[RMDB]
RNA sequence: GGGAACGACUCGAGUAGAGUCGAAAAAGGAAUGGACGAUGAAUAAUUAUAUGAAGACUUCAAACAAGGCAUUAUUGCGCUUAAAAAUAGAAUUUAUUUCACCGGACCAUUUCGCGAGCAAGGGAACUAAUUAUGAACGUUUCGACGUUCAUAAUUAAAAAGAAACAACAACAACAAC
Reactivity to 2A3 in 0.01 (KOAc 150mM, MgCl2 10mM, bicine 150mM(pH8.5), 24C), signal-to-noise 9, nucleotides 027 to 126: a010g010g000a010a000u000g000g000a000c000g010a010u010g010a000a000u030a030a010u090u080a060u040a050u170g080a070a050g090a090c060u120u060c190a070a110a110c040a070a050g040g000c020a030u060u100a140u300u300g010c190g110c040u070u090a030a110a030a030a000u080a050g050a030a030u040u070u040a050u030u180u040c000a010c010c000g030g060a090c010c010a000u010u000u010c030g000c050g030a020g020c050a060a040g040g020g020a020a010c040
Reactivity to DMS in 0.01 (KOAc 150mM, MgCl2 10mM, bicine 150mM(pH8.5), 24C), signal-to-noise 6, nucleotides 027 to 126: a130g010g000a020a000u000g010g000a240c000g000a030u000g000a040a020u010a010a020u010u020a120u020a050u020g000a080a110g000a170c150u020u030c140a100a100a120c210a030a040g000g000c000a050u010u030a110u020u010g010c040g010c030u000u000a020a050a070a090a030u010a020g000a060a040u010u010u010a020u020u010u010c000a000c040c010g000g000a100c010c010a010u000u000u000c000g010c140g010a090g000c110a040a050g000g010g000a080a080c170
Conditions: 150 mM KOAc, 10 mM MgCl2 and 150 mM bicine (pH 8.5), 24 C. Chemical mapping of a 177-nucleotide RNA with 2A3 and DMS. DMS adducts were read by reverse transcription with MarathonRT. Values cover nucleotides 27 to 126.